RNA sequence: GGGAACGACUCGAGUAGAGUCGAAAAGGGUAGAUCUUCGGAUCUACCCAAAAGGAGGAACCAACGAAGGAAGUGCUAGCAUAAGCGUGCAGGCUAGCACUAAAAGGUUCCGCUUCGGCGGAACCAACACCAAUGAAAUGUUCGCAUUUCAUUGGUGAAAAGAAACAACAACAACAAC
Reactivity to DMS in 0.01 (KOAc 150mM, MgCl2 10mM, bicine 150mM(pH8.5), 24C), signal-to-noise 4, nucleotides 027 to 126: g000g010g010u000a010g010a010u000c000u000u010c200g030g010a000u000c000u000a010c000c000c000a030a010a040a090g010g010a080g010g000a090a140c020c030a070a100c180g000a110a110g000g010a110a050g010u000g000c010u000a000g010c010a060u010a070a100g040c070g010u000g010c090a110g000g000c000u000a000g000c000a010c000u000a030a030a110a080g010g010u000u000c000c000g010c000u000u010c160g030g010c010g000g010a010a010c000c000a050a120
Reactivity to 2A3 in 0.01 (KOAc 150mM, MgCl2 10mM, bicine 150mM(pH8.5), 24C), signal-to-noise 4, nucleotides 027 to 126: g010g000g000u010a000g000a000u020c020u050u070c230g040g000a000u000c000u000a000c000c000c000a000a000a000a000g020g020a040g000g050a020a050c010c010a020a070c110g100a110a030g160g080a060a030g010u000g010c000u000a010g000c010a090u050a300a040g100c080g090u100g040c060a010g080g000c000u000a000g010c000a000c000u000a000a000a000a020g010g000u010u000c000c000g000c000u030u050c150g110g000c000g000g000a000a000c000c000a000a010